Structure probing data (2A3 and DMS) for a 177-nucleotide construct. Conditions: 150 mM KOAc, 10 mM MgCl2 and 150 mM bicine (pH 8.5), 24 C.
RNA sequence: GGGAACGACUCGAGUAGAGUCGAAAAGAUAUGGACGUUGAAAUUGGAACUACUCUACUAUUCGGAAACGAAUAGAAGAGCCAAUGGAGUCCUAAGUCAAAGGGUAUAUGCUUCGGCAUAUACCCAAUCUGGGAUAUGUGUUCGCACAUAUCCCAGAAAAAGAAACAACAACAACAAC
Reactivity to 2A3 in 0.01 (KOAc 150mM, MgCl2 10mM, bicine 150mM(pH8.5), 24C), signal-to-noise 1, nucleotides 027 to 126: g050a030u070a060u290g020g000a010c030g050u190u110g070a040a080a000u000u030g030g010a100a130c140u160a070c060u300c000u010a090c010u000a030u000u000c000g000g070a020a070a070c000g010a000a010u000a000g000a010a020g180a010g010c000c000a030a050u010g070g000a010g020u010c000c030u030a100a030g040u100c010a060a040a070g010g000g000u000a000u040a000u010g000c010u040u130c300g120g040c000a000u000a000u000a000c020c000c010a000a040
Reactivity to DMS in 0.01 (KOAc 150mM, MgCl2 10mM, bicine 150mM(pH8.5), 24C), signal-to-noise 1, nucleotides 027 to 126: g010a050u010a300u000g010g010a010c000g040u010u010g030a090a080a000u000u000g000g000a070a040c040u000a300c000u000c000u010a060c030u000a000u000u000c000g030g010a110a090a110c010g000a000a000u000a010g000a090a010g000a000g000c000c000a000a000u000g000g000a090g010u000c010c010u000a010a080g000u010c080a100a100a060g010g020g010u000a000u000a000u000g010c000u000u000c190g010g030c000a000u000a000u000a000c000c000c000a000a000

Annotation:
For DMS the reverse transcriptase was MarathonRT. Reactivities are rounded to 0.1 and cut off at 0 and 3.